[RMDB]
An RNA of 207 nucleotides, treated with DMS and 2A3 and read out base by base. For 2A3 the reverse transcriptase was SuperScript II with manganese. The 2A3 profile rests on 1,614 reads. In probing experiments dimethyl sulfate is read out at A N1 and C N3, which are open when not base-paired. DMS adducts were read by reverse transcription with MarathonRT.
RNA sequence: GGGAACGACUCGAGUAGAGUCGAAAAAACGUUGCAUGAUCGUAAAACAUGCCCGACUUACCGUGAGCCGCCUUUGAAAGAAAGGUUUACACGGACUCUGUUGCGUUACGCACGUACCUAACUUGUGAAAACGGCAUCUUGUUCGCAAGAUGCCGAACUUAUAACCGGACUUCGGUCCGGUUAUAAGAAAAGAAACAACAACAACAAC
Reactivity to DMS in 0.01 (KOAc 150mM, MgCl2 10mM, bicine 150mM(pH8.5), 24C), signal-to-noise 1, nucleotides 027 to 156: a040a050c050g000u040u000g030c000a090u010g000a120u000c050g000u000a050a080a050a010c010a020u010g030c020c060c040g030a050c000u010u000a090c020c060g010u020g090a080g040c030c030g000c030c000u000u050u010g000a150a080a160g010a040a030a040g020g040u000u000u000a130c040a100c010g000g050a110c170u000c080u010g000u000u000g000c070g010u000u000a050c070g010c060a050c050g040u000a050c030c000u010a050a090c070u000u020g030u000g000a090a090a060a200c000g000g000c000a030u020c010u000u000g000u000u000c300g030c000a040a030g000a050u000g050c000c000g000a000a000
Reactivity to 2A3 in 0.01 (KOAc 150mM, MgCl2 10mM, bicine 150mM(pH8.5), 24C), signal-to-noise 3, nucleotides 027 to 156: a000a000c010g000u010u000g000c000a000u020g030a060u120c050g060u210a090a140a020a000c000a010u010g010c040c010c000g070a060c030u040u140a090c000c010g020u010g000a030g070c060c040g010c020c050u040u050u010g190a230a140a050g150a040a060a010g060g030u020u030u070a040c000a000c000g070g000a050c030u050c040u080g060u080u050g040c020g060u070u090a040c110g050c030a010c030g050u080a100c000c030u060a070a140c040u060u090g020u050g150a050a030a030a010c000g000g010c010a000u000c000u000u030g010u070u080c160g030c050a000a000g000a020u000g000c000c000g000a000a000